RNA sequence: GGGAACGACUCGAGUAGAGUCGAAAAGAUAUGGAUGAUUGUUAGCUAGCGACCCGGUCGGAAACGACCGGUCGCUUGGACCUAACAACGUCAUCCUAAGUCAAAUCUUGUUCUUCGGAACAAGAAAGCUAACUAUAGACUUCGGUCUAUAGUUAGCAAAAGAAACAACAACAACAAC
Reactivity to DMS in 0.01 (KOAc 150mM, MgCl2 10mM, bicine 150mM(pH8.5), 24C), signal-to-noise 3, nucleotides 027 to 126: g020a050u010a290u000g000g000a020u000g010a070u010u000g000u000u000a010g010c040u000a020g020c020g010a030c130c110c100g010g000u000c000g000g010a100a110a220c020g010a000c000c000g020g000u000c000g030c000u000u000g000g000a120c300c020u000a020a010c010a040a060c220g010u000c010a000u010c000c000u010a060a170g010u000c020a100a130a110u010c010u000u010g010u000u010c000u000u010c260g010g000a030a020c000a010a000g010a040a070a110
Reactivity to 2A3 in 0.01 (KOAc 150mM, MgCl2 10mM, bicine 150mM(pH8.5), 24C), signal-to-noise 2, nucleotides 027 to 126: g030a030u120a050u220g020g030a000u000g000a000u000u110g000u000u020a020g020c110u030a010g000c010g030a030c110c190c130g120g020u010c010g030g040a030a030a130c020g000a030c000c000g000g000u000c000g000c000u000u060g010g020a000c000c000u020a010a010c010a000a060c090g080u000c000a000u030c000c000u020a170a020g090u040c040a040a030a270u020c010u000u010g030u010u020c020u000u060c300g180g030a010a010c010a000a000g000a070a020a010